Chemical mapping of a 177-nucleotide RNA with 2A3 and DMS. Reactivities are given for positions 27 through 126.
[RMDB]
RNA sequence: GGGAACGACUCGAGUAGAGUCGAAAAGAUAUGGAGUUUCGAACUACUCGGUCAUUCGGAAACGAAUGUCGAGCGAGAACUCCUAAGUCAAAACCUCGUUCUCGAACUUCGGUUCGAGAACGAGGAACUAUAUGUCGAACUUCGGUUCGACAUAUAGAAAAGAAACAACAACAACAAC
Reactivity to 2A3 in 0.01 (KOAc 150mM, MgCl2 10mM, bicine 150mM(pH8.5), 24C), signal-to-noise 2, nucleotides 027 to 126: g010a030u090a100u190g000g020a010g010u040u070u090c040g010a090a050c070u130a050c000u300c010g010g070u210c010a000u000u000c010g010g030a100a060a040c010g000a000a000u010g010u030c000g000a010g000c010g010a100g050a050a000c010u010c000c000u010a110a020g040u020c010a040a040a080a300c000c010u010c000g000u000u010c010u040c010g020a000a010c010u080u090c300g140g000u000u000c010g000a050g040a000a010c000g000a010g010g000a000a000
Reactivity to DMS in 0.01 (KOAc 150mM, MgCl2 10mM, bicine 150mM(pH8.5), 24C), signal-to-noise 2, nucleotides 027 to 126: g010a020u010a300u000g000g010a000g010u000u000u000c030g000a080a100c140u000a250c010u000c010g020g000u010c000a000u010u000c000g000g010a100a100a150c010g010a030a000u000g000u010c000g000a000g000c060g000a120g010a010a020c010u000c000c000u000a030a100g020u030c010a070a090a070a150c000c010u000c000g000u000u000c000u000c000g020a000a010c000u000u040c160g030g040u000u000c000g000a000g020a000a010c020g020a000g010g010a010a040